[RMDB]
RNA sequence: GGGAACGACUCGAGUAGAGUCGAAAAGCUGUAAAGUACCAUGUAAACUUGAUGGAGGAUGGAGUUCAUGGAGUGAUUGGAGUGCUUGCUCUUCGAGUUGUCAUCGGUAUAGGACGAGAGCAUGUAAGUGGCUCAUCAGUUUCGACUGAUGAGCCACAAAAGAAACAACAACAACAAC
Reactivity to 2A3 in 0.01 (KOAc 150mM, MgCl2 10mM, bicine 150mM(pH8.5), 24C), signal-to-noise 1, nucleotides 027 to 126: g030c000u040g060u160a070a090a020g010u010a030c010c000a020u050g060u160a090a180a060c000u030u110g040a070u130g000g090a040g000g050a030u060g040g000a000g080u110u030c000a030u090g070g060a080g030u080g030a110u000u110g050g000a040g060u070g040c020u020u020g080c000u020c000u080u100c030g030a060g000u000u030g040u040c000a070u080c060g050g010u120a070u020a150g030g040a000c020g000a010g010a010g010c020a020u050g000u040a140a080
Reactivity to DMS in 0.01 (KOAc 150mM, MgCl2 10mM, bicine 150mM(pH8.5), 24C), signal-to-noise 1, nucleotides 027 to 126: g010c020u000g020u000a050a050a120g000u000a100c010c000a030u010g000u010a140a060a060c040u010u000g040a090u000g030g000a050g020g040a090u000g000g010a080g000u000u000c060a030u020g020g010a090g010u000g000a160u000u000g020g010a070g010u000g000c050u000u010g020c000u000c040u000u000c020g010a140g000u000u010g000u000c040a130u000c080g020g000u000a050u000a080g000g010a100c110g010a080g000a080g010c040a010u000g020u000a060a100
Structure probing data (2A3 and DMS) for a 177-nucleotide construct. In probing experiments dimethyl sulfate is read out at A N1 and C N3, which are open when not base-paired. Source: RMDB library OK2TST, as collected in RNAgym. For DMS the reverse transcriptase was MarathonRT. Values cover nucleotides 27 to 126. The 2A3 profile rests on 990 reads. For 2A3 the reverse transcriptase was SuperScript II with manganese.